[RMDB]
RNA sequence: GGGAACGACUCGAGUAGAGUCGAAAAGACAUGCCUGGUUUUGAGUGGGGGAGGAUGCUUACCUAACUUCCUUUCACCCUGCGUGGGUUGAGGCGGCUUAGCGGAUUAGGGCGUUCUGCCCCUGGGUACCUUUACCCUAUGUAAAGUAUGCAUGCGUGGUGGCAUUAUAGUUCGCUAUAAUGCCACCAAAAGAAACAACAACAACAAC
Reactivity to 2A3 in 0.01 (KOAc 150mM, MgCl2 10mM, bicine 150mM(pH8.5), 24C), signal-to-noise 1, nucleotides 027 to 156: g080a070c000a010u000g000c010c010u090g110g040u050u050u050u190g190a160g140u140g000g030g000g000g000a000g000g000a000u000g000c000u080u040a060c000c000u080a000a000c000u040u000c000c020u010u020u070c080a050c000c000c040u110g010c300g040u300g010g000g000u070u210g000a000g010g020c010g010g000c070u010u010a010g000c100g110g190a260u120u300a140g180g020g020c030g040u040u010c000u040g190c020c030c000c000u030g020g000g000u160a060c000c110u000u120u130a000c000c000c000u010a090u150g050u040a000a100a100g150u080a050u050g030c030a020u020g020c030g000u060

Structure probing data (2A3) for a 207-nucleotide construct. The RNA was probed in 150 mM KOAc, 10 mM MgCl2 and 150 mM bicine (pH 8.5) at 24 C. It was measured as part of the RMDB library VIROID.